[RMDB]
RNA sequence: GGGAACGACUCGAGUAGAGUCGAAAACUGCGUAAGACCUAACAGUCUUGGUAGCCCGAUAGUCUGAAACUGGACCGAGGGUUUUAGAAUCUAUCGUCAUUUUCUUGGUAUGAAUUCUUUUUCUCGCCGCUUCUAGGGAAAAGUUUUCAAGAUUAAACACGUAGAAAUCGUUCGCGAUUUCUACGUGAAAAGAAACAACAACAACAAC
Reactivity to 2A3 in 0.01 (KOAc 150mM, MgCl2 10mM, bicine 150mM(pH8.5), 24C), signal-to-noise 1, nucleotides 027 to 156: c010u000g020c010g120u110a000a050g000a040c010c010u040a070a060c020a050g000u020c010u020u000g010g010u050a050g050c040c010c010g020a020u000a000g030u000c000u010g040a020a000a000c010u000g000g040a000c000c000g010a020g000g000g000u000u000u000u000a020g000a000a020u030c020u060a010u000c040g300u080c270a090u170u280u140u280c040u030u040g040g000u000a030u050g000a000a030u020u020c010u000u060u030u030u010c040u000c060g110c110c080g150c170u170u170c080u300a080g000g000g000a000a000a020a000g000u000u030u000u000c000a000a000g010a020u060u220a140a100a050
Structure probing data (2A3) for a 207-nucleotide construct. It was measured as part of the RMDB library RSTRND. High 2A3 reactivity points to a flexible backbone, as in loops and unpaired stretches.